[RMDB]
RNA sequence: GGGAACGACUCGAGUAGAGUCGAAAAGAUAUGGACCCUACUACCCACCUGUAGCGCUCUUUGAUCGGUUUUAUAUCGGAAACGAUAUAAAACCGGGAGAGCGCCUACAGAGGUAGGGUCCUAAGUCGAUUACUAACAAGUUCGCUUGUUAGUAAUCAAAAGAAACAACAACAACAAC
Reactivity to 2A3 in 0.01 (KOAc 150mM, MgCl2 10mM, bicine 150mM(pH8.5), 24C), signal-to-noise 3, nucleotides 027 to 126: g110a060u300a220u300g010g010a010c010c010c010u010a000c000u180a180c010c030c010a030c020c020u000g000u020a000g020c010g000c010u020c030u110u190u140g210a290u300c020g000g000u020u010u000u000a000u010a000u000c010g000g000a100a090a040c010g010a020u000a000u000a000a020a030a000c000c010g000g000g000a000g000a000g010c000g000c000c000u000a000c000a010g000a010g000g000u000a000g000g020g000u000c000c000u010a010a000g150u080c110
Reactivity to DMS in 0.01 (KOAc 150mM, MgCl2 10mM, bicine 150mM(pH8.5), 24C), signal-to-noise 4, nucleotides 027 to 126: g020a170u010a160u010g010g020a010c000c000c010u000a020c010u000a160c020c020c000a300c150c000u000g000u000a020g020c000g020c010u000c000u010u000u000g010a130u030c010g010g010u000u000u000u010a000u000a000u010c010g000g000a190a110a230c010g010a020u000a010u000a020a000a010a020c010c010g010g000g000a020g000a030g030c000g000c210c040u000a000c000a000g000a070g000g000u000a010g020g000g010u000c000c000u000a000a090g010u020c150